[RMDB]
RNA sequence: GGGAACGACUCGAGUAGAGUCGAAAAAAUAAUUGGCGAAACUCGUUUCGCGUUGGCUGCCUAAUUCAAGGAAUUAGCGUGCCUUCAUGCUAAGGGUUUGAUAUCUGCUAAAACCCGGUGCAUUCAUCAAUGCAGGUUAAGCCAAAGGGAUGUCCCGGCUAUAAUGGCAGUUCGCUGCCAUUAUAGCAAAAGAAACAACAACAACAAC
Reactivity to DMS in 0.01 (KOAc 150mM, MgCl2 10mM, bicine 150mM(pH8.5), 24C), signal-to-noise 1, nucleotides 027 to 156: a080a020u000a100a130u000u000g000g010c030g020a240a040a030c070u010c030g040u000u000u010c000g010c120g080u000u010g030g020c060u000g030c130c000u000a030a100u000u010c000a230a180g090g000a040a030u010u010a030g010c080g030u010g000c000c000u000u000c060a070u000g000c000u050a300a160g010g010g000u000u030u000g000a150u000a200u000c100u000g000c150u000a140a010a010a120c030c010c000g060g080u000g000c000a130u030u020c030a100u000c080a190a150u010g000c050a030g000g000u000u000a040a290g010c000c000a000a070a100g000g030g010a040u000g010u000c000c030c000g000
Reactivity to 2A3 in 0.01 (KOAc 150mM, MgCl2 10mM, bicine 150mM(pH8.5), 24C), signal-to-noise 2, nucleotides 027 to 156: a000a000u190a020a050u020u010g030g000c010g010a030a020a090c050u080c110g100u040u140u100c100g050c010g020u000u000g000g010c010u090g080c020c020u010a030a000u050u020c140a250a110g150g020a070a020u000u000a010g030c040g030u030g000c000c010u000u030c040a070u090g000c000u040a020a040g010g000g010u000u000u010g020a000u010a090u170c050u060g020c030u070a000a000a050a060c000c060c020g000g000u060g000c000a030u060u240c010a060u060c040a120a110u080g010c030a040g010g060u060u050a070a010g000c000c000a020a020a030g060g020g010a040u130g030u100c000c000c000g020